[RMDB]
Source: RMDB library 15KLIB, as collected in RNAgym. An RNA of 170 nucleotides, treated with DMS and 2A3 and read out base by base. DMS adducts were read by reverse transcription with MarathonRT. For 2A3, 5,591 sequencing reads were counted. 2A3 adducts were read by reverse transcription with SuperScript II with manganese. The RNA was probed in 150 mM KOAc, 10 mM MgCl2 and 150 mM bicine (pH 8.5) at 24 C. DMS (dimethyl sulfate) methylates the pairing face of unpaired adenines and cytosines.

RNA sequence: GGGAACGACUCGAGUAGAGUCGAAAACCAGUAAUACCCGGGGGGAGGCGGGGUAAACCCAUACUAUGGGAACUGCUGGGUUCCUCGGAUGUCGAUCCCCUCUCCCGUUCGGGAAAAGGGGGACUCCAUGGUGGUUCCUUCGGGAACCACAAAAGAAACAACAACAACAAC
Reactivity to DMS in 0.01 (KOAc 150mM, MgCl2 10mM, bicine 150mM(pH8.5), 24C), signal-to-noise 3, nucleotides 027 to 129: c000c000a060g030u090a110a090u020a110c030c000c000g000g000g050g020g020g040a010g000g000c170g010g080g000g000u050a000a000a000c080c060c020a060u060a060c130u120a170u030g040g010g000a090a100c060u020g100c140u030g050g010g030u070u010c040c030u000c210g000g000a040u070g070u020c010g040a130u040c000c040c030c010u020c120u000c020c000c070g030u070u040c190g000g020g030a000a050a140a160g000g000g000g000g000a080c000u000c000c050a110u000g030
Reactivity to 2A3 in 0.01 (KOAc 150mM, MgCl2 10mM, bicine 150mM(pH8.5), 24C), signal-to-noise 3, nucleotides 027 to 129: c010c000a000g000u070a020a090u090a060c000c000c010g000g000g000g000g000g000a010g000g030c060g010g000g060g020u040a070a030a040c000c000c000a010u050a210c090u140a140u240g000g000g000a030a010c010u060g040c050u060g100g020g050u080u010c000c000u000c000g030g000a060u110g010u030c000g020a150u110c000c000c000c000u030c000u020c040c010c000g090u150u180c120g010g000g000a000a030a040a000g000g000g000g000g000a000c000u030c000c030a010u150g160